RNA sequence: GGGAACGACUCGAGUAGAGUCGAAAACGCUGAUGCCGGAAUCGAAAUCGUUGGCGAUAUCGAGCUGUUCUGUCGCGAAGCACAAGCACCGAUUGUGGCGAUUACCGGUUCUAACGGCAAAAGCACGGAUCGGUUACUGGUUCGCCAGUAACCGAUCAAAAGAAACAACAACAACAAC
Reactivity to 2A3 in 0.01 (KOAc 150mM, MgCl2 10mM, bicine 150mM(pH8.5), 24C), signal-to-noise 1, nucleotides 027 to 126: c080g000c020u010g020a040u010g000c020c000g000g010a000a010u000c000g000a010a000a050u030c020g000u030u060g300g020c060g040a030u050a030u160c000g010a030g050c100u010g010u070u000c080u050g060u050c040g000c060g300a190a090g070c080a010c000a050a000g000c020a030c030c010g000a010u000u130g030u030g050g000c020g000a000u010u010a130c080c030g000g000u020u010c000u060a180a050c000g000g000c000a010a010a010a010g000c140a020c070g080
Reactivity to DMS in 0.01 (KOAc 150mM, MgCl2 10mM, bicine 150mM(pH8.5), 24C), signal-to-noise 1, nucleotides 027 to 126: c130g000c010u000g000a300u000g000c020c000g000g000a060a030u000c000g020a120a060a020u000c000g020u000u000g110g090c070g000a130u010a000u000c020g020a200g040c100u000g000u000u000c170u010g000u000c030g050c150g000a100a070g030c080a000c040a000a040g060c100a090c040c080g000a030u000u000g050u010g010g000c030g010a020u030u000a130c150c020g010g000u000u000c030u000a080a300c090g000g000c000a000a010a300a020g020c030a130c200g010